[RMDB]
Annotation: Conditions: 150 mM KOAc, 10 mM MgCl2 and 150 mM bicine (pH 8.5), 24 C. The record gives the reactivity of an RNA of 207 nucleotides to 2A3. It was measured as part of the RMDB library M2RFPK. Values cover nucleotides 27 to 156. 2A3 adducts were read by reverse transcription with SuperScript II with manganese.
RNA sequence: GGGAACGACUCGAGUAGAGUCGAAAAAACAAACAUCAAAUCGCAUAGCAAAGAGUCAUAAAAAUAGAGAGCUUUGCGAGACCUACCAAGGGUGAAGAGAUACCAUCCAAGGAGCUGAAGAGAAAUCGAGAGCUCACGGCGUUCGCGCCGUGAGCAACUUCACCAUGAAGUUCGCUUCAUGGUGAAGAAAAGAAACAACAACAACAAC
Reactivity to 2A3 in 0.01 (KOAc 150mM, MgCl2 10mM, bicine 150mM(pH8.5), 24C), signal-to-noise 1, nucleotides 027 to 156: a000a000c100a060a080a030c040a030u240c040a030a080a080u020c010g040c000a000u020a000g000c040a070a070a060g090a020g040u130c110a100u270a280a210a080a160a000u280a080g100a000g000a000g020c000u000u070u040g010c010g010a000g040a010c000c020u060a100c020c010a010a040g000g060g000u010g020a090a000g080a000g030a080u080a160c020c020a000u000c000c010a000a080g010g000a020g030c070u110g010a040a000g170a000g050a010a110a000u170c080g020a030g020a000g230c000u000c000a000c080g060g010c020g020u070u140c120g010c020g000c070c000g000u010g010a000g000c010a000a000